[RMDB]
RNA sequence: GGGAACGACUCGAGUAGAGUCGAAAAGAUAUGGAGACCCACGCGUCGAACUACUAUACUUCGUCGGAAACGACGAAGUACAUGACGACGUGCUCCUAAGUCAAAGUACACUCUUCGGAGUGUACAACCCCCUUGUAAUCUUCGGAUUACAAGGGGGAAAAGAAACAACAACAACAAC
Reactivity to DMS in 0.01 (KOAc 150mM, MgCl2 10mM, bicine 150mM(pH8.5), 24C), signal-to-noise 1, nucleotides 027 to 126: g000a020u000a150u010g010g000a020g010a040c000c000c020a300c090g000c010g030u000c000g000a090a150c210u000a040c140u020a090u000a000c000u010u000c000g000u000c000g000g000a190a110a150c000g000a030c000g000a000a010g020u000a000c080a060u000g010a260c020g020a020c000g000u000g000c000u010c000c000u010a030a070g040u010c020a150a040a120g000u000a000c000a010c000u000c000u010u000c220g000g000a010g020u000g050u000a000c000a050a080
Reactivity to 2A3 in 0.01 (KOAc 150mM, MgCl2 10mM, bicine 150mM(pH8.5), 24C), signal-to-noise 2, nucleotides 027 to 126: g030a010u050a030u170g000g010a020g000a040c010c010c020a020c030g000c010g020u030c010g060a170a120c110u210a030c010u000a120u010a100c000u010u010c020g010u000c010g000g080a050a060a080c010g000a000c000g040a000a010g020u000a020c020a040u070g000a030c010g010a010c000g000u010g050c000u020c000c000u030a230a030g070u010c040a110a000a050g000u010a020c020a000c000u030c000u050u170c300g110g010a000g010u000g000u000a010c000a010a000
Structure probing data (DMS and 2A3) for a 177-nucleotide construct. Conditions: 150 mM KOAc, 10 mM MgCl2 and 150 mM bicine (pH 8.5), 24 C. For DMS the reverse transcriptase was MarathonRT. The data come from the RNA Mapping Database (RMDB), library TTRDEL.